[RMDB]
RNA sequence: GGGAACGACUCGAGUAGAGUCGAAAAGCAGGUCCUGGGCCCGCUCGCCGAGGCGCACGCCCUUAAGAUCCAGAGAGAGGAUGAGGCGCGGGUUGGCCGUGUCGGGAUCCAAGGUGAGCUCCACUGCAAGGUCAAGUUGUUUCGACAACUUGACCUUAAAAGAAACAACAACAACAAC
Reactivity to DMS in 0.01 (KOAc 150mM, MgCl2 10mM, bicine 150mM(pH8.5), 24C), signal-to-noise 1, nucleotides 027 to 126: g000c030a050g000g000u000c000c050u020g010g010g010c020c000c000g030c020u010c110g020c010c000g000a210g020g000c150g020c060a050c080g000c010c030c040u010u010a130a180g010a110u000c020c050a110g010a260g010a180g020a070g000g010a050u000g000a150g010g010c020g010c020g050g000g050u000u010g010g040c040c020g050u010g010u010c050g010g020g010a040u010c000c000a010a080g010g020u000g010a300g000c020u000c030c040a280c080u010g010c190

Conditions: 150 mM KOAc, 10 mM MgCl2 and 150 mM bicine (pH 8.5), 24 C. The record gives the reactivity of an RNA of 177 nucleotides to DMS. The data come from the RNA Mapping Database (RMDB), library OK2TRN.